[RMDB]
The record gives the reactivity of an RNA of 177 nucleotides to DMS and 2A3.
The reactions ran in a buffer of 150 mM KOAc, 10 mM MgCl2 and 150 mM bicine (pH 8.5), at 24 C.
For DMS, 2,364 sequencing reads were counted.
The data come from the RNA Mapping Database (RMDB), library RFM100.
RNA sequence: GGGAACGACUCGAGUAGAGUCGAAAAUAUCCUUCCCGUUCCUGUGCAGAUGUCUGAGGCUUCUUUCUCCUUUAGUCAAAUCUGAUUUCUAUUUCUUCUUGGUUAAUACCCCCAGAGUGCUCCUGGCCGAUUUUAUGGCUUUCGAGCCAUAAAAUCGAAAAGAAACAACAACAACAAC
Reactivity to DMS in 0.01 (KOAc 150mM, MgCl2 10mM, bicine 150mM(pH8.5), 24C), signal-to-noise 2, nucleotides 027 to 126: u030a030u010c010c040u000u000c000c000c020g000u000u000c000c000u000g030u010g030c040a070g040a090u010g010u000c000u000g010a100g000g000c020u000u010c010u010u030u020c040u000c010c020u000u010u030a100g000u000c050a080a090a110u020c090u030g000a100u000u010u000c040u010a100u030u010u000c000u010u010c010u010u000g020g000u020u010a080a110u000a160c070c010c030c120c010a090g000a080g000u010g020c010u000c030c030u000g010g000c110
Reactivity to 2A3 in 0.01 (KOAc 150mM, MgCl2 10mM, bicine 150mM(pH8.5), 24C), signal-to-noise 2, nucleotides 027 to 126: u160a040u060c000c000u000u030c050c000c000g010u030u000c020c010u060g050u060g050c030a010g000a150u030g040u070c020u060g040a030g060g000c010u040u010c020u010u110u000c040u030c020c030u030u140u130a100g030u080c030a050a030a160u090c020u030g040a080u050u140u020c070u050a160u070u050u000c020u030u000c010u070u040g000g000u060u000a070a030u130a220c000c000c000c000c000a010g060a010g050u020g000c000u010c010c010u010g010g000c010